RNA sequence: GGGAACGACUCGAGUAGAGUCGAAAACACCUCGGAGGAGAUCGGGCUCAAGGCCCUGGCCUUCCUCAAGGAGCUGGACCACGUGGCCUACAUCCCGUUCGCCUCCGUCUACCGCGAGUUUGACUCGGUGGAGCGCUUCAUUGAGGAGAUCCGCUGCCUGAAAAAAUUAGUUCGCUAAUUUUUUCAGAAAAGAAACAACAACAACAAC
Reactivity to 2A3 in 0.01 (KOAc 150mM, MgCl2 10mM, bicine 150mM(pH8.5), 24C), signal-to-noise 3, nucleotides 027 to 156: c050a020c000c000u000c010g000g000a000g000g000a010g000a010u000c000g000g010g030c030u050c170a020a020g020g000c000c000c010u010g000g010c000c000u030u030c010c020u150c160a090a220g020g000a020g000c160u110g050g030a300c000c010a120c150g070u190g000g000c000c000u030a030c050a070u030c020c010c000g010u000u000c010g010c010c000u000c000c000g000u000c010u060a060c030c050g010c020g060a100g150u010u070u140g090a070c000u000c010g000g030u000g010g050a080g050c260g010c130u040u060c010a040u020u100g010a030g040g000a020g010a010u040c030c000g010c030u050g030c020
Reactivity to DMS in 0.01 (KOAc 150mM, MgCl2 10mM, bicine 150mM(pH8.5), 24C), signal-to-noise 1, nucleotides 027 to 156: c060a150c010c020u000c010g010g000a040g000g020a030g010a010u000c020g000g020g030c150u000c070a160a080g050g000c020c010c020u000g030g000c010c010u000u000c020c000u000c030a140a160g040g020a050g030c030u020g050g020a030c020c000a090c140g030u030g050g050c010c000u010a150c060a100u030c000c000c000g030u000u000c000g000c020c030u000c010c010g020u010c020u000a100c030c030g000c040g000a060g030u020u000u000g030a200c030u010c010g000g020u000g000g000a060g020c130g040c050u000u010c020a170u010u030g010a120g040g010a100g010a010u000c010c010g020c050u000g000c090